[RMDB]
RNA sequence: GGGAACGACUCGAGUAGAGUCGAAAACAUUUUACUGUUCCUGUUAUAAUAGUGACAGGUAUAGAAAAACGUAUUGUAUAGUUGUACAGUUCCUAUUAUGCGUAUCAAAGAUAAAACUAUGCUGCUGCAUAGCGCGUGUUUUCGAACACGCGCUAUGAAAAGAAACAACAACAACAAC
Reactivity to 2A3 in 0.01 (KOAc 150mM, MgCl2 10mM, bicine 150mM(pH8.5), 24C), signal-to-noise 5, nucleotides 027 to 126: c010a000u090u040u030u090a160c010u010g040u030u030c000c000u000g000u000u020a220u070a290a280u250a100g150u050g010a000c000a000g000g000u020a020u000a000g100a050a030a010a000a010c060g040u070a070u070u090g010u030a030u030a080g130u000u120g000u030a000c020a040g010u020u010c000c010u050a110u170u110a070u120g080c070g040u070a010u150c050a140a060a030g090a060u150a110a060a010a000c010u010a020u050g000c020u030g000c020u030g000
Reactivity to DMS in 0.01 (KOAc 150mM, MgCl2 10mM, bicine 150mM(pH8.5), 24C), signal-to-noise 3, nucleotides 027 to 126: c020a100u010u000u000u000a130c000u000g010u010u000c010c000u000g000u000u010a050u000a170a130u040a130g000u000g010a020c000a000g000g000u010a020u000a000g000a070a020a010a040a030c130g000u000a110u010u000g020u010a020u010a120g010u000u010g000u000a030c070a070g010u000u010c010c000u000a070u030u040a030u040g000c060g000u010a040u010c120a030a110a100g020a110u010a060a060a050a060c070u000a020u000g000c030u010g000c050u020g000
Source: RMDB libraries RFM100 and RFMREP, as collected in RNAgym. Chemical mapping of a 177-nucleotide RNA with 2A3 and DMS. The reactions ran in a buffer of 150 mM KOAc, 10 mM MgCl2 and 150 mM bicine (pH 8.5), at 24 C.